[RMDB]
RNA sequence: GGGAACGACUCGAGUAGAGUCGAAAAUCGGCGGCGACCGAAGCGAGGGGGAAAGUAAAGAGAGCAACGGGGCUAGCGAGUGGAUGUUCCGCCUCCCCAGGGUCCCGAGUGAGGCUUAUCCCGGGGAAUGGGCCAGAGUUCGCUCUGGCCAAAAGAAACAACAACAACAAC
Reactivity to 2A3 in 0.01 (KOAc 150mM, MgCl2 10mM, bicine 150mM(pH8.5), 24C), signal-to-noise 3, nucleotides 027 to 129: u050c020g010g000c000g040g050c030g050a050c010c030g020a000a000g040c010g030a030g000g010g000g010g030a040a020a000g010u040a040a070a010g050a000g010a010g020c010a030a090c020g000g000g010g000c000u070a050g070c010g020a050g010u080g020g040a070u080g050u130u020c040c030g040c010c000u000c010c000c010c000a040g010g000g020u020c020c010c020g000a030g040u180g010a010g010g000c020u060u110a050u040c000c000c000g000g000g000g010a080a120u150g060
Reactivity to DMS in 0.01 (KOAc 150mM, MgCl2 10mM, bicine 150mM(pH8.5), 24C), signal-to-noise 4, nucleotides 027 to 129: u020c090g010g050c130g000g000c120g030a100c060c040g020a140a110g000c170g000a060g010g050g020g030g000a010a040a040g020u060a000a000a000g010a080g050a040g040c080a120a140c120g030g000g030g050c090u030a110g020c030g000a070g000u050g030g020a080u060g010u020u000c040c060g030c080c020u030c040c040c000c000a200g000g000g000u060c020c020c030g020a100g080u090g020a090g010g010c130u000u030a020u060c070c020c010g000g040g010g090a100a070u100g040